[RMDB]
Description:
An RNA of 177 nucleotides, treated with 2A3 and DMS and read out base by base. For 2A3, 4,237 sequencing reads were counted. Values cover nucleotides 27 to 126. The reactions ran in a buffer of 150 mM KOAc, 10 mM MgCl2 and 150 mM bicine (pH 8.5), at 24 C.

RNA sequence: GGGAACGACUCGAGUAGAGUCGAAAAUCCUUCCUUUUCGAAGGAAGGACAGUGCACAGUCUUCGCAUCUCUGAAUCACACAACAGCCGUGUCUAUGCGAGGUUUUAAUCAAGUUCGCUUGAUUAAACACAGUAGUUCCUUUCGAGGAACUACUGUGAAAAGAAACAACAACAACAAC
Reactivity to 2A3 in 0.01 (KOAc 150mM, MgCl2 10mM, bicine 150mM(pH8.5), 24C), signal-to-noise 2, nucleotides 027 to 126: u020c010c000u030u000c010c000u070u070u040u070c260g100a010a010g000g000a000a000g000g000a010c020a040g150u150g040c070a020c010a130g040u030c000u040u020c050g000c020a050u000c090u000c000u140g100a160a090u160c020a030c010a010c020a150a160c030a120g120c080c080g050u030g000u000c040u070a020u040g010c000g020a000g000g070u010u080u000u030a010a000u010c010a000a010g000u010u090c160g040c080u020u020g000a010u000u020a010a020a000
Reactivity to DMS in 0.01 (KOAc 150mM, MgCl2 10mM, bicine 150mM(pH8.5), 24C), signal-to-noise 4, nucleotides 027 to 126: u010c000c000u000u000c010c000u000u000u000u010c180g020a030a020g010g010a030a000g010g010a000c070a040g000u000g020c070a100c100a100g000u010c020u000u000c040g020c030a040u000c100u000c080u010g000a090a070u010c100a060c050a070c070a060a080c170a090g010c090c050g020u000g010u010c070u000a050u010g020c030g020a060g000g010u010u010u010u000a000a000u000c010a010a010g010u000u000c190g010c000u000u000g000a010u000u000a000a010a080